[RMDB]
RNA sequence: GGGAACGACUCGAGUAGAGUCGAAAAUAUGCUAAUAAUAACUCCUGUUAGCAACGUGCGCAGAUACACACAGACAUGAGAUUCAGGGAACAACAGAGCCACACGUCAGAAACUUCCGUCAGCCGGAGUUCUCAUGUUAGUUCGCUAACAUGAGAACAAAAGAAACAACAACAACAAC
Reactivity to 2A3 in 0.01 (KOAc 150mM, MgCl2 10mM, bicine 150mM(pH8.5), 24C), signal-to-noise 1, nucleotides 027 to 126: u180a070u050g010c000u050a070a020u100a100a010u050a160a100c040u010c030c020u000g020u040u000a000g010c060a050a030c070g090u050g000c070g000c050a020g020a060u160a060c060a000c030a010c000a030g030a030c030a070u150g030a080g030a100u090u070c020a060g020g030g020a010a030c000a030a030c000a040g070a010g030c000c030a030c000a010c050g030u000c000a010g030a110a140a020c020u030u000c030c000g010u050c030a010g030c060c020g000g020a040
Reactivity to DMS in 0.01 (KOAc 150mM, MgCl2 10mM, bicine 150mM(pH8.5), 24C), signal-to-noise 1, nucleotides 027 to 126: u000a010u000g000c000u000a030a060u000a070a100u010a120a150c100u020c020c030u010g010u020u000a020g010c000a100a160c120g010u000g020c050g070c090a040g000a070u020a080c030a070c040a020c020a120g010a150c130a040u000g030a030g010a110u010u000c040a090g020g000g000a070a030c070a080a090c050a040g010a020g000c060c020a020c140a020c080g010u020c120a050g010a040a070a090c110u000u000c040c020g010u000c100a110g020c060c050g000g010a200
Chemical mapping of a 177-nucleotide RNA with 2A3 and DMS. DMS adducts were read by reverse transcription with MarathonRT. The RNA was probed in 150 mM KOAc, 10 mM MgCl2 and 150 mM bicine (pH 8.5) at 24 C. 2A3 is a SHAPE reagent: it acylates the 2'-hydroxyl of flexible nucleotides of all four kinds. Reactivities are given for positions 27 through 126.